[RMDB]
RNA sequence: GGGAACGACUCGAGUAGAGUCGAAAAUGAGCGUGUUACAGCACUGUAGUCGCAAGCGUGCGUGACCCGCGUGUAUAGAGCAGCACUAUAGACGUGAGCACCGCCGAUCCCAGAUAGUGCCGCCUAGCGCGGUAUGAAGGUUCGCCUUCAUACCGCGAAAAGAAACAACAACAACAAC
Reactivity to 2A3 in 0.01 (KOAc 150mM, MgCl2 10mM, bicine 150mM(pH8.5), 24C), signal-to-noise 4, nucleotides 027 to 126: u250g000a010g030c030g000u030g050u070u070a030c070a030g000c050a010c040u090g060u130a060g050u070c060g050c140a080a050g060c040g020u050g000c010g010u030g030a120c000c050c000g010c040g010u060g000u040a120u010a010g080a050g010c040a000g010c010a020c040u000a000u020a080g080a050c050g030u050g070a010g020c040a010c060c030g000c010c020g000a010u010c010c010c000a010g020a010u100a020g020u040g040c000c020g010c010c040u050a040g060
Reactivity to DMS in 0.01 (KOAc 150mM, MgCl2 10mM, bicine 150mM(pH8.5), 24C), signal-to-noise 2, nucleotides 027 to 126: u010g010a260g000c030g080u010g020u000u010a060c030a080g000c050a050c000u030g000u010a040g000u000c060g000c150a070a080g000c010g000u000g010c040g030u000g000a040c020c010c000g030c020g000u020g010u020a040u000a020g000a080g040c070a020g000c050a140c000u010a020u010a030g000a090c070g000u020g000a110g000c060a070c060c070g000c010c000g000a140u010c000c000c000a220g010a060u000a000g020u020g000c010c050g000c010c020u000a080g010
An RNA of 177 nucleotides, treated with 2A3 and DMS and read out base by base. It was measured as part of the RMDB library OK1LIB. The RNA was probed in 150 mM KOAc, 10 mM MgCl2 and 150 mM bicine (pH 8.5) at 24 C.